[RMDB]
RNA sequence: GGGAACGACUCGAGUAGAGUCGAAAACGGCUGCCGCCUUUCCUUCAUCGACGGCACGCCGGAUAUGGUCGUCUAUCCGCGUGAUCGCGCCGCUUAUGGCCAAUUGUGCCGCCUGCUGACGGAAGGAAGGUAUACUACGCUUCGGCGUAGUAUACCUAAAAGAAACAACAACAACAAC
Reactivity to DMS in 0.01 (KOAc 150mM, MgCl2 10mM, bicine 150mM(pH8.5), 24C), signal-to-noise 1, nucleotides 027 to 126: c110g010g000c070u010g020c020c030g010c060c000u030u000u000c090c010u010u000c010a080u000c050g060a040c010g010g000c010a020c010g020c120c000g010g000a040u010a030u000g010g010u000c110g010u000c070u000a080u000c000c000g020c080g010u030g000a080u010c110g000c110g000c010c040g000c300u010u020a080u020g000g010c010c010a120a110u000u000g010u000g000c000c000g010c020c000u020g000c090u000g010a050c140g000g000a070a040g010g000a140
Reactivity to 2A3 in 0.01 (KOAc 150mM, MgCl2 10mM, bicine 150mM(pH8.5), 24C), signal-to-noise 1, nucleotides 027 to 126: c020g000g060c040u080g040c030c020g000c030c000u050u080u040c000c000u040u040c040a090u050c020g090a070c000g010g000c020a000c000g000c000c070g000g020a020u040a050u060g110g060u150c100g030u050c040u010a020u000c000c000g050c070g040u070g100a110u150c060g000c030g010c040c020g040c070u280u240a140u300g000g030c000c010a080a140u060u140g060u100g020c000c000g040c000c020u130g000c010u030g020a010c020g040g010a000a000g000g000a050
Annotation
An RNA of 177 nucleotides, treated with DMS and 2A3 and read out base by base. The DMS profile rests on 1,356 reads. The reactions ran in a buffer of 150 mM KOAc, 10 mM MgCl2 and 150 mM bicine (pH 8.5), at 24 C. High 2A3 reactivity points to a flexible backbone, as in loops and unpaired stretches. Reactivities are rounded to 0.1 and cut off at 0 and 3. The data come from the RNA Mapping Database (RMDB), library OK2TST.